[RMDB]
Background:
Chemical mapping of a 177-nucleotide RNA with DMS and 2A3. The reactions ran in a buffer of 150 mM KOAc, 10 mM MgCl2 and 150 mM bicine (pH 8.5), at 24 C. High DMS reactivity at an A or C suggests that its Watson-Crick edge is free. 2A3 adducts were read by reverse transcription with SuperScript II with manganese. The data come from the RNA Mapping Database (RMDB), library OK2TST.
RNA sequence: GGGAACGACUCGAGUAGAGUCGAAAAGGAAAGAGUGAUGAAUUUGAUCCAAUCGAUAACCAACUUGUGUUACUUAAAGACAAGGCGCUCGGGUUAGUUCGAUCUAAAGUAUUCAAAAUUCUGAUGACAGUGAGUUAGUGUUCGCACUAACUCACUGAAAAGAAACAACAACAACAAC
Reactivity to DMS in 0.01 (KOAc 150mM, MgCl2 10mM, bicine 150mM(pH8.5), 24C), signal-to-noise 2, nucleotides 027 to 126: g010g000a050a080a210g010a030g010u010g010a220u020g000a210a020u000u000u000g010a300u000c010c060a080a300u010c000g020a010u010a040a100c230c090a150a110c000u000u010g000u010g000u000u000a080c200u010u020a050a040a030g000a060c000a000a000g000g000c120g010c080u000c030g020g030g030u010u000a080g000u000u000c030g000a090u010c050u010a080a120a150g010u030a040u000u010c180a030a050a090a060u000u000c060u010g000a150u000g010a160
Reactivity to 2A3 in 0.01 (KOAc 150mM, MgCl2 10mM, bicine 150mM(pH8.5), 24C), signal-to-noise 2, nucleotides 027 to 126: g000g010a010a000a000g020a000g040u040g030a100u140g030a080a040u050u050u030g020a010u000c010c000a000a030u010c000g010a000u010a070a050c060c050a020a070c050u020u020g000u010g100u070u070a100c100u140u150a260a050a060g020a000c000a000a010g020g010c020g000c040u020c000g020g000g080u010u030a090g030u020u020c010g000a030u050c010u120a090a080a060g080u040a170u110u150c040a100a070a090a220u140u000c030u070g090a100u160g060a040